The record gives the reactivity of an RNA of 207 nucleotides to 2A3.
RNA sequence: GGGAACGACUCGAGUAGAGUCGAAAAGGGGUCCCACGUUGAAAGCUCGUUGUCAGCCUAAGGACUGAAGCCUCCACGGUCCGAUGGGCUUGGAUUUACGAGCUGGAGUGGGACGGAGGCACCCAAAGUGUUUCUCGUGUUCGCACGAGAAACACAAUCACUCAGUUGAGUUCGCUCAACUGAGUGAAAAAGAAACAACAACAACAAC
Reactivity to 2A3 in 0.01 (KOAc 150mM, MgCl2 10mM, bicine 150mM(pH8.5), 24C), signal-to-noise 1, nucleotides 027 to 156: g070g000g030g010u000c010c020c000a010c000g140u220u000g010a020a000a040g000c000u020c000g060u030u180g250u240c200a100g170c000c000u070a090a000g010g000a000c000u000g000a050a030g030c000c000u000c000c010a060c020g000g000u060c030c020g070a190u300g010g040g040c020u020u080g010g000a010u000u000u290a000c040g000a000g000c020u000g000g000a020g000u000g030g010g000a000c000g020g000a000g000g000c030a050c000c010c000a050a080a020g000u000g030u000u000u000c010u000c010g010u010g030u020u040c240g010c060a000c040g000a000g000a020a000a000c000a000c000a000a030
2A3 adducts were read by reverse transcription with SuperScript II with manganese. Reactivities are given for positions 27 through 156.